The record gives the reactivity of an RNA of 177 nucleotides to DMS. For DMS the reverse transcriptase was MarathonRT. High DMS reactivity at an A or C suggests that its Watson-Crick edge is free. The DMS profile rests on 625 reads.
[RMDB]
RNA sequence: GGGAACGACUCGAGUAGAGUCGAAAAAGACAGGUUAGUUUUACCCUACUGAUGAGUUCGUUGUCUAAACAGUAAUCCAACCCAGUACGAGAGGAACCGUUGGUUCAGAUAAUUGGUAACUGCGGUUUGGUUUAGAUAGGUUCGCCUAUCUAAACCAAAAAGAAACAACAACAACAAC
Reactivity to DMS in 0.01 (KOAc 150mM, MgCl2 10mM, bicine 150mM(pH8.5), 24C), signal-to-noise 1, nucleotides 027 to 126: a070g000a100c080a120g010g020u000u000a200g020u000u020u020u000a000c020c050c000u000a040c060u020g000a160u030g010a060g000u000u000c050g000u000u010g000u010c020u000a060a050a180c140a060g000u000a090a110u020c020c030a080a130c000c020c020a110g000u000a020c050g000a110g000a210g010g000a030a030c060c180g040u020u040g060g000u000u000c040a080g020a090u020a060a150u020u000g020g020u020a050a050c020u000g000c010g000g010u000u000

About this RNA
The RNA was probed in 150 mM KOAc, 10 mM MgCl2 and 150 mM bicine (pH 8.5) at 24 C.